[RMDB]
RNA sequence: GGGAACGACUCGAGUAGAGUCGAAAAGAUAUGGACCAUUCUACCCACCCAGGAUCUUGGAACCUUGGAUUUACGCUCGGAAACGAGCGUUGUCAGGUUCCAAGACCUGGAGGAAUGGUCCUAAGUCGAACACAUCCUAGUUCGCUAGGAUGUGUUCAAAAGAAACAACAACAACAAC
Reactivity to 2A3 in 0.01 (KOAc 150mM, MgCl2 10mM, bicine 150mM(pH8.5), 24C), signal-to-noise 3, nucleotides 027 to 126: g140a080u300a220u300g040g010a000c000c010a010u010u000c050u120a300c020c020c020a020c010c000c010a040g080g050a300u010c000u010u010g010g020a000a020c000c000u090u300g290g020a050u300u300u230a020c020g020c020u000c000g050g030a080a150a100c010g010a000g010c000g000u000u000g000u010c000a000g000g000u010u060c000c000a000a000g000a000c000c010u000g010g000a000g000g000a000a000u000g010g010u000c000c000u000a000a000g040u060c050
Reactivity to DMS in 0.01 (KOAc 150mM, MgCl2 10mM, bicine 150mM(pH8.5), 24C), signal-to-noise 2, nucleotides 027 to 126: g010a160u010a180u000g020g040a020c000c000a040u000u000c000u000a220c020c020c040a300c110c000c000a000g000g010a160u010c000u000u010g000g000a010a000c000c000u030u020g030g010a010u000u000u000a000c000g000c000u000c000g000g000a120a120a210c000g000a020g010c000g050u000u000g050u000c000a030g000g000u000u000c000c000a000a030g000a000c000c000u010g000g010a010g000g000a020a010u000g000g020u000c000c000u030a010a100g000u000c170
The record gives the reactivity of an RNA of 177 nucleotides to 2A3 and DMS. The reactions ran in a buffer of 150 mM KOAc, 10 mM MgCl2 and 150 mM bicine (pH 8.5), at 24 C. For DMS, 1,365 sequencing reads were counted.